[RMDB]
RNA sequence: GGGAACGACUCGAGUAGAGUCGAAAACUUGAGUAUGGAACGAUCGCCCACGGAGAAGGAGGUUGCGAUGGAUUGCCCUGUUAGCUGUCUCGAAGGGGUGGGGGCGCGUUAAGAGUAUCCCCGUAGGAUAAAUAUAAUAAUUCGUUAUUAUAUUUAUAAAAGAAACAACAACAACAAC
Reactivity to DMS in 0.01 (KOAc 150mM, MgCl2 10mM, bicine 150mM(pH8.5), 24C), signal-to-noise 2, nucleotides 027 to 126: c020u000u000g000a090g020u000a080u000g000g020a050a070c050g000a080u010c020g000c020c000c040a110c090g010g020a160g010a100a070g000g010a080g010g000u000u010g010c040g020a080u010g010g010a140u040u010g010c030c060c010u000g000u020u010a130g000c000u000g020u000c010u030c030g010a110a130g010g000g000g030u020g010g000g000g010g030c070g010c060g010u010u000a060a160g010a080g000u010a100u000c000c000c010c070g000u010a070g000g010

An RNA of 177 nucleotides, treated with DMS and read out base by base.